The record gives the reactivity of an RNA of 177 nucleotides to DMS. Reactivities are given for positions 27 through 126.
[RMDB]
RNA sequence: GGGAACGACUCGAGUAGAGUCGAAAAUGCAUCGGAAGCUGCGCGUGUUGCUGUCCAGCUUCUGGGGGACAAAGCGCCGAAGGCCGAGACCACGCUCUACAACACGCCGUCGAAGCUGUUUGUGCCAGCGAGGAGCUAGUUUCGACUAGCUCCUCGCAAAAGAAACAACAACAACAAC
Reactivity to DMS in 0.01 (KOAc 150mM, MgCl2 10mM, bicine 150mM(pH8.5), 24C), signal-to-noise 1, nucleotides 027 to 126: u020g010c140a060u010c030g010g010a070a040g040c050u000g020c170g000c050g000u010g010u020u000g030c100u000g000u000c120c040a040g020c000u010u000c090u010g000g000g020g000g000a110c100a050a060a090g020c010g050c090c010g040a080a120g010g020c000c000g000a110g020a070c090c040a060c050g000c020u000c030u000a040c110a080a080c080a090c020g020c010c110g000u000c120g000a060a090g020c020u000g010u000u000u000g000u000g000c050c080a120
Conditions: 150 mM KOAc, 10 mM MgCl2 and 150 mM bicine (pH 8.5), 24 C.